[RMDB]
RNA sequence: GGGAACGACUCGAGUAGAGUCGAAAAGAAAGACUCGUCGUCGACGAAGGGUUCUUUCGUUCGCAAGGCUCCCUGCCGAGCUCGGGGCUGGAGCUUGGGACUGCUCAUAGAGAGCAGGUCGCCAGCCGAUAAUCUUCAGGUUCGCCUGAAGAUUAUCAAAAGAAACAACAACAACAAC
Reactivity to 2A3 in 0.01 (KOAc 150mM, MgCl2 10mM, bicine 150mM(pH8.5), 24C), signal-to-noise 3, nucleotides 027 to 126: g010a010a000a000g000a020c010u000c020g030u020c030g080u100c140g090a240c040g030a090a050g080g000g010u220u090c000u020u010u000c030g030u060u090c100g010c150a060a060g030g000c010u030c020c000c010u040g020c030c020g060a010g000c050u040c050g080g000g000g000c010u020g030g040a050g030c060u110u100g020g000g000a030c000u000g000c000u000c010a100u180a100g300a010g000a000g100c000a000g000g050u000c020g030c050c000a010g000c000c000
Reactivity to DMS in 0.01 (KOAc 150mM, MgCl2 10mM, bicine 150mM(pH8.5), 24C), signal-to-noise 4, nucleotides 027 to 126: g010a020a010a020g000a020c010u000c000g000u000c000g020u010c290g000a110c040g000a040a040g010g010g010u010u000c010u000u000u000c000g010u020u010c080g010c090a080a200g010g010c020u000c010c020c030u010g000c020c030g010a150g010c030u010c100g010g020g020g000c020u000g000g010a080g010c050u010u000g010g010g010a090c000u000g000c000u000c000a140u000a120g010a250g000a010g010c000a010g000g010u000c040g010c020c010a040g000c040c040
Structure probing data (2A3 and DMS) for a 177-nucleotide construct. As a SHAPE reagent, 2A3 marks flexible, mostly unpaired nucleotides at the ribose 2'-OH. The 2A3 profile rests on 4,286 reads. It was measured as part of the RMDB library VIROID.